[RMDB]
RNA sequence: GGGAACGACUCGAGUAGAGUCGAAAAUGACACUCCUAGCGUACUUCAAGCUACUCUUUCUGAGUUUUCACACUUAGCUACCUUUGCUGAGUUGGAAGCUGCGCAGAAAGCCUAUCAGGAAGCUAUGUUCACUCGAGCUUCGGCUCGAGUAAAAGAAACAACAACAACAAC
Reactivity to 2A3 in 0.01 (KOAc 150mM, MgCl2 10mM, bicine 150mM(pH8.5), 24C), signal-to-noise 6, nucleotides 027 to 129: u120g020a010c010a030c050u020c020c010u010a020g010c010g020u070a050c030u040u070c050a070a020g020c030u080a060c010u010c000u040u030u010c010u010g010a010g010u010u000u010u000c040a080c010a010c030u020u000a000g000c000u090a150c060c140u230u200u150g000c000u000g000a000g000u000u000g020g000a000a000g020c010u040g070c130g000c020a010g030a010a010a000g000c000c000u120a150u100c020a000g060g060a080a010g010c040u050a070u080g040u060u070c050
Reactivity to DMS in 0.01 (KOAc 150mM, MgCl2 10mM, bicine 150mM(pH8.5), 24C), signal-to-noise 4, nucleotides 027 to 129: u050g020a070c210a090c110u000c020c030u000a000g010c040g030u040a070c050u000u000c090a060a080g000c050u030a130c200u030c020u000u000u000c030u010g000a040g020u000u000u000u000c010a060c250a060c020u000u050a020g030c010u000a010c250c140u040u090u040g000c020u010g000a010g020u000u010g000g000a000a000g010c020u050g020c190g060c060a040g040a040a030a020g040c100c100u030a090u000c020a100g050g020a030a020g000c060u030a030u080g020u000u000c140